[RMDB]
RNA sequence: GGGAACGACUCGAGUAGAGUCGAAAAGGGAAUGGUGGUUUACCCCGGUAUCAAAUGAUUACCGACCAAUAAUUGGCGAAACUCGUUUCGCGUUGGCUGCCUAAUUCAAGGAAUUAGCGUGCCUUCAAAGACAUCAAGAAGUUCGCUUCUUGAUGAACUAUAUGUGUUGCUUCGGCAACACAUAUAGAAAAGAAACAACAACAACAAC
Reactivity to DMS in 0.01 (KOAc 150mM, MgCl2 10mM, bicine 150mM(pH8.5), 24C), signal-to-noise 2, nucleotides 027 to 156: g030g010g000a060a050u000g010g030u000g010g000u000u000u000a140c030c010c040c020g000g000u000a060u000c040a120a130a150u000g010a100u000u000a050c030c000g000a100c000c020a080a090u000a050a130u020u000g030g030c000g020a110a050a040c020u000c110g040u000u000u010c000g030c090g020u000u000g000g020c010u000g000c100c010u000a030a040u000u000c010a100a130g030g040a080a020u000u000a010g000c030g020u000g000c010c000u000u000c040a060a070a140g000a170c010a020u000c000a000a010g000a040a000g000u000u010c300g020c020u000u010c010u010u020g000a000u010g010a020a090
Reactivity to 2A3 in 0.01 (KOAc 150mM, MgCl2 10mM, bicine 150mM(pH8.5), 24C), signal-to-noise 4, nucleotides 027 to 156: g010g010g020a070a170u090g020g030u060g010g080u090u070u200a140c020c010c010c010g000g000u010a010u080c050a100a210a280u300g010a030u070u130a020c010c010g040a040c030c030a030a040u230a130a060u100u110g060g000c030g020a060a000a000c100u110c170g040u010u010u010c030g000c000g000u020u030g000g010c010u030g000c010c020u000a000a020u020u010c110a220a120g140g010a060a040u010u000a010g010c040g070u030g000c010c010u000u000c010a050a080a040g070a030c000a000u000c000a000a000g000a010a000g010u030u180c160g080c130u010u000c000u000u000g000a000u000g000a010a000
An RNA of 207 nucleotides, treated with DMS and 2A3 and read out base by base. The DMS profile rests on 5,070 reads. It was measured as part of the RMDB library M2RFPK. The reactions ran in a buffer of 150 mM KOAc, 10 mM MgCl2 and 150 mM bicine (pH 8.5), at 24 C.